[RMDB]
RNA sequence: GGGAACGACUCGAGUAGAGUCGAAAAACAGCCUCUGUGGACUUCCCACAUUAGUACCUGGUGCAAAGUCCUAGCAUCACCUUCUGGGCUCAUUUCACAGCAAGCACUGGGGAUAGUUACCAAGUGUUUCUGAGAAACGCGUAAAAAUUGCAGAAAAAAUUAUCCGAGGAUUCGUCCUCGGAUAAUUAAAAGAAACAACAACAACAAC
Reactivity to 2A3 in 0.01 (KOAc 150mM, MgCl2 10mM, bicine 150mM(pH8.5), 24C), signal-to-noise 1, nucleotides 027 to 156: a000c020a010g060c060c000u090c110u110g010u080g020g050a040c040u080u040c040c050c030a020c040a090u050u120a000g030u060a040c000c020u010g000g000u020g030c020a070a080a000g010u000c000c000u050a010g000c000a060u060c020a110c000c070u100u200c070u050g000g020g000c010u010c050a120u020u110u150c060a070c010a050g020c040a050a040g030c000a000c000u010g000g000g040g000a000u080a100g110u050u130a080c030c050a120a100g040u010g000u020u010u000c010u010g000a040g010a080a030a010c060g030c010g030u120a030a030a080a110a160u290u300g040c040a020g150a300a030a050a300